[RMDB]
RNA sequence: GGGAACGACUCGAGUAGAGUCGAAAAUACCGUCUUCUCCCCGACGGUUUCAAUCCAUAGCUUCACGUUGUGUAGCGUAGGUGGAAGGUAUCGUUUGGUGUAUAAACACCACAUAGUCUCUUAGGGGUCAAGCUGAUAAACUUCGGUUUAUCAGCAACGACUGGAUUCGAUUCGUCGAAUCCAGUCGAAAAGAAACAACAACAACAAC
Reactivity to 2A3 in 0.01 (KOAc 150mM, MgCl2 10mM, bicine 150mM(pH8.5), 24C), signal-to-noise 1, nucleotides 027 to 156: u080a050c020c000g010u030c080u180u040c040u040c000c060c000c000g010a000c000g080g000u000u020u020c120a050a070u040c000c000a010u060a090g000c000u030u070c010a010c030g300u300u220g040u030g020u030a030g000c030g060u100a120g100g020u000g010g030a010a010g060g060u110a080u160c100g050u010u030u110g050g000u010g010u020a070u070a160a300a020c020a000c000c090a010c050a010u100a030g180u020c000u000c030u100u140a070g000g000g000g000u050c010a020a030g000c010u000g000a000u000a000a000a000c000u000u040c150g060g020u010u000u000a000u000c000a010g050c000a000a010